Chemical mapping of a 177-nucleotide RNA with 2A3 and DMS. The 2A3 profile rests on 2,056 reads.
RNA sequence: GGGAACGACUCGAGUAGAGUCGAAAAGAUAUGGAACUGAACUACAUUGUAGCAAGCAUCGAUCUCGGAAACGAGGGAGCUUGUGAGGAUGCAGUUCCUAAGUCAAACCGCAUCUUCGGAUGCGGAAGUGAGGUAUUUUCUUCGGAAAAUACCUCACAAAAGAAACAACAACAACAAC
Reactivity to 2A3 in 0.01 (KOAc 150mM, MgCl2 10mM, bicine 150mM(pH8.5), 24C), signal-to-noise 2, nucleotides 027 to 126: g070a030u080a040u120g000g010a000a010c020u010g020a070a040c070u150a030c300a010u040u120g040u030a020g010c000a000a010g000c030a150u300c090g100a090u010c020u000c000g020g010a070a090a060c020g000a000g020g020g020a000g000c010u000u020g010u030g000a050g140g000a000u000g000c000a010g000u020u000c000c000u020a080a030g090u030c070a060a000a140c000c000g000c010a010u000c030u030u040c230g140g010a010u000g000c020g020g010a010a010
Reactivity to DMS in 0.01 (KOAc 150mM, MgCl2 10mM, bicine 150mM(pH8.5), 24C), signal-to-noise 1, nucleotides 027 to 126: g000a050u010a300u010g000g000a040a030c020u020g000a090a020c080u030a300c000a020u000u000g000u000a300g000c000a000a010g000c010a220u020c300g020a050u020c000u000c020g010g000a080a100a160c000g000a000g000g030g000a050g020c020u000u010g000u000g000a100g030g000a010u000g000c000a020g000u000u000c000c020u000a050a030g020u000c020a090a050a200c000c020g020c000a000u020c000u000u020c160g000g000a020u010g010c000g000g020a000a030
Conditions: 150 mM KOAc, 10 mM MgCl2 and 150 mM bicine (pH 8.5), 24 C.
It was measured as part of the RMDB library TTRDEL.